[RMDB]
RNA sequence: GGGAACGACUCGAGUAGAGUCGAAAAGAUAUGGAUAGUACGCGAGUUUCGACGAUCGUGCGGUCGGAAACGACCGUCACGGGAGAAACUCACUAUCCUAAGUCAAAGCUUGCCUUCGGGCAAGCAAGACGAACCAUAGGUUCGCCUAUGGUUCGUCAAAAGAAACAACAACAACAAC
Reactivity to DMS in 0.01 (KOAc 150mM, MgCl2 10mM, bicine 150mM(pH8.5), 24C), signal-to-noise 4, nucleotides 027 to 126: g010a060u010a300u010g000g000a020u000a010g010u000a140c300g020c300g000a030g020u000u000u000c000g000a120c300g010a030u010c010g020u000g010c020g000g000u000c010g010g010a100a100a200c000g010a010c010c000g010u000c010a010c000g000g000g010a050g010a010a000a000c000u000c000a050c000u000a020u000c000c000u000a040a160g020u000c020a130a150a160g010c000u000u000g000c000c000u000u000c250g020g010g020c010a000a010g020c010a020a020
Reactivity to 2A3 in 0.01 (KOAc 150mM, MgCl2 10mM, bicine 150mM(pH8.5), 24C), signal-to-noise 5, nucleotides 027 to 126: g020a030u090a040u140g000g010a000u010a000g050u140a100c280g070c170g300a030g010u000u030u010c300g140a300c040g000a110u030c010g000u010g000c000g000g000u000c000g000g020a050a120a050c010g000a010c000c000g050u280c010a000c000g010g000g010a030g000a010a000a010c000u000c000a000c000u000a000u000c010c000u000a160a030g010u020c040a170a060a040g000c000u000u000g000c000c000u050u090c300g100g000g000c010a000a000g000c000a000a010